[RMDB]
Source information: The record gives the reactivity of an RNA of 177 nucleotides to 2A3. For 2A3 the reverse transcriptase was SuperScript II with manganese.

RNA sequence: GGGAACGACUCGAGUAGAGUCGAAAAAUUUCAAUCAAAAUCAUUUAUCGUUUUGUUUAGCUAUUUUUUUCUCAAAUUAUCACUCUUUUCUUCCUUUUUCAUUCUCUCAAUUGUUCUUUUUAUUUGACAAGGUUGGAUUAUUCGUAAUCCAACCUUGAAAAGAAACAACAACAACAAC
Reactivity to 2A3 in 0.01 (KOAc 150mM, MgCl2 10mM, bicine 150mM(pH8.5), 24C), signal-to-noise 4, nucleotides 027 to 126: a000u070u090u050c030a020a010u010c010a020a010a000a080u100c030a050u100u300u240a140u200c060g010u010u000u010u040g040u010u050u050a020g000c000u020a080u020u010u010u000u000u060u010c030u010c030a140a210a100u210u100a150u190c040a040c030u010c000u000u040u010u000c000u000u000c000c000u020u060u020u040u060c010a050u060u000c020u000c010u010c050a080a150u040u020g010u020u000c000u010u060u040u040u070a270u110u090u060g020a020

The 2A3 profile rests on 1,686 reads.